Structure probing data (2A3 and DMS) for a 170-nucleotide construct. The reactions ran in a buffer of 150 mM KOAc, 10 mM MgCl2 and 150 mM bicine (pH 8.5), at 24 C. For DMS, 16,257 sequencing reads were counted. The 2A3 profile rests on 19,543 reads. The data come from the RNA Mapping Database (RMDB), library 15KLIB.
RNA sequence: GGGAACGACUCGAGUAGAGUCGAAAACGCAUUGAUUAUAGUGAUGCUGUAUCCUACAAGUCUAGUACAACGUAUAAACUGACUGUAGGUGACAUCUUCGUACUUACCUCUCACUCUGUGGCUACCUGUAGUGACUCGUUCGCGAGUCACAAAAGAAACAACAACAACAAC
Reactivity to 2A3 in 0.01 (KOAc 150mM, MgCl2 10mM, bicine 150mM(pH8.5), 24C), signal-to-noise 9, nucleotides 027 to 129: c030g010c020a030u010u080g090a070u080u210a080u150a120g130u100g050a020u020g000c060u030g020u040a030u000c000c000u000a000c010a120a030g010u000c030u210a000g010u030a060c060a180a010c180g160u170a060u120a180a140a030c000u020g010a000c000u000g000u000a000g000g000u010g020a000c010a020u060c030u060u050c050g020u030a030c010u030u020a070c000c010u010c000u000c010a020c000u010c000u040g010u020g010g000c000u020a050c000c000u010g020u030a050
Reactivity to DMS in 0.01 (KOAc 150mM, MgCl2 10mM, bicine 150mM(pH8.5), 24C), signal-to-noise 4, nucleotides 027 to 129: c160g040c100a060u000u000g020a080u000u000a070u010a120g040u000g050a000u020g000c060u020g040u030a090u000c010c000u000a040c040a040a090g010u020c010u110a000g000u020a080c130a170a100c260g050u080a130u040a130a070a090c060u000g000a010c030u020g020u010a010g010g080u010g030a080c080a060u020c090u040u010c070g030u020a000c090u000u000a090c030c010u000c020u030c020a090c050u020c000u000g020u050g010g030c040u000a040c090c000u000g010u000a000